[RMDB]
RNA sequence: GGGAACGACUCGAGUAGAGUCGAAAACUGACUGACACAGCUCAGAAAAUAUCCAAAGCUCUGUAUGCUCUGGAAAGGAAGACAAGAAAUGCUAAAGACUCUGGAUAUUGCUCUGUUUAAAAUAAAACAACAGUCUUAGGUUCGCCUAAGACUGUUGAAAAGAAACAACAACAACAAC
Reactivity to 2A3 in 0.01 (KOAc 150mM, MgCl2 10mM, bicine 150mM(pH8.5), 24C), signal-to-noise 7, nucleotides 027 to 126: c010u030g090a020c030u030g030a030c030a010c020a220g040c030u020c010a010g060a050a090a000a020u030a020u000c010c000a000a000a030g020c100u000c020u040g080u090a050u170g030c000u000c030u060g090g060a090a050a020g090g050a050a050g030a050c040a060a050g070a100a190a020u220g010c020u070a130a020a000g000a020c000u010c010u020g020g020a010u010a020u030u060g000c030u030c010u060g090u010u060u050a110a190a080a090u200a030a070a030a020
Reactivity to DMS in 0.01 (KOAc 150mM, MgCl2 10mM, bicine 150mM(pH8.5), 24C), signal-to-noise 2, nucleotides 027 to 126: c020u010g000a110c090u020g000a070c090a140c150a110g000c110u010c030a000g000a080a150a060a020u000a020u010c010c000a010a030a010g020c080u000c030u010g000u030a130u040g000c020u010c120u000g030g000a050a100a180g020g020a080a010g000a070c120a050a070g010a060a100a040u000g010c010u010a170a100a050g000a030c000u000c050u000g010g000a030u000a020u000u010g000c040u020c050u010g000u000u000u000a040a040a050a050u040a050a070a080a130